RNA sequence: GGGAACGACUCGAGUAGAGUCGAAAACUGAAGCUGCCUGACUCCCUCUGGGUGUAAGACUUCUGGUUACAUGAGUAAGGCAAUGCUCAGCCGUCUGCCUAUGUGCCCUAGCACCCACCUCCGCAGCCGAUGGAGUCACAUUCGUGUGACUCCAUCGAAAAGAAACAACAACAACAAC
Reactivity to DMS in 0.01 (KOAc 150mM, MgCl2 10mM, bicine 150mM(pH8.5), 24C), signal-to-noise 1, nucleotides 027 to 126: c050u000g000a050a090g030c030u000g010c000c050u000g040a130c090u000c000c000c020u000c150u030g020g000g000u000g020u010a070a070g010a130c090u010u030c160u000g050g010u000u000a020c100a050u000g000a070g020u000a020a110g000g000c050a070a090u010g010c070u010c130a100g000c040c070g020u010c110u000g000c000c010u010a000u010g010u010g000c050c010c060u000a210g010c040a020c030c030c000a100c030c030u010c030c030g010c100a010g010c080
Reactivity to 2A3 in 0.01 (KOAc 150mM, MgCl2 10mM, bicine 150mM(pH8.5), 24C), signal-to-noise 1, nucleotides 027 to 126: c020u010g060a000a000g040c010u020g010c000c040u060g080a120c080u050c060c030c000u040c060u030g000g040g000u000g000u040a070a060g030a090c030u100u050c070u110g010g050u100u110a000c020a030u070g060a030g060u050a080a060g000g050c010a000a070u090g040c030u030c100a040g060c110c040g060u050c050u070g050c000c010u030a030u060g020u020g020c040c010c030u000a010g000c000a000c000c020c000a030c000c010u070c000c020g010c020a030g040c020